[RMDB]
RNA sequence: GGGAACGACUCGAGUAGAGUCGAAAAGGCGAGGCCAAGACCCAGCCGGAAGAGAAGGCUAGAUCUCCCGACCCAAGCUCCUAGCACGGAUACCGAGCACCCACGCGGAGCACAUGCCGCGGAAUAGCAUGAAUGAUUGGUUCGCCAAUCAUUCAUGAAAAGAAACAACAACAACAAC
Reactivity to DMS in 0.01 (KOAc 150mM, MgCl2 10mM, bicine 150mM(pH8.5), 24C), signal-to-noise 3, nucleotides 027 to 126: g010g030c040g010a100g020g030c030c040a100a090g010a110c070c030c060a140g010c030c020g010g020a090a070g000a110g010a120a080g010g030c050u000a080g000a110u010c040u000c040c010c010g020a150c070c030c030a040a140g000c020u000c020c020u010a090g020c040a080c050g030g000a090u010a060c060c050g000a070g000c080a130c030c010c020a120c020g010c020g000g000a060g000c150a050c220a090u020g030c000c010g020c020g000g000a070a070u010a090g010
Reactivity to 2A3 in 0.01 (KOAc 150mM, MgCl2 10mM, bicine 150mM(pH8.5), 24C), signal-to-noise 2, nucleotides 027 to 126: g040g020c040g060a050g020g020c030c050a060a040g070a100c020c000c000a010g030c010c010g020g040a120a030g070a020g040a140a060g050g020c030u060a010g000a120u000c010u020c020c010c010g060a060c020c000c000a020a000g020c020u000c020c010u040a010g010c040a020c070g000g030a060u040a080c020c040g010a020g000c000a050c020c010c000a030c010g010c000g000g010a020g100c010a000c000a120u220g050c000c000g000c010g000g030a060a050u120a060g030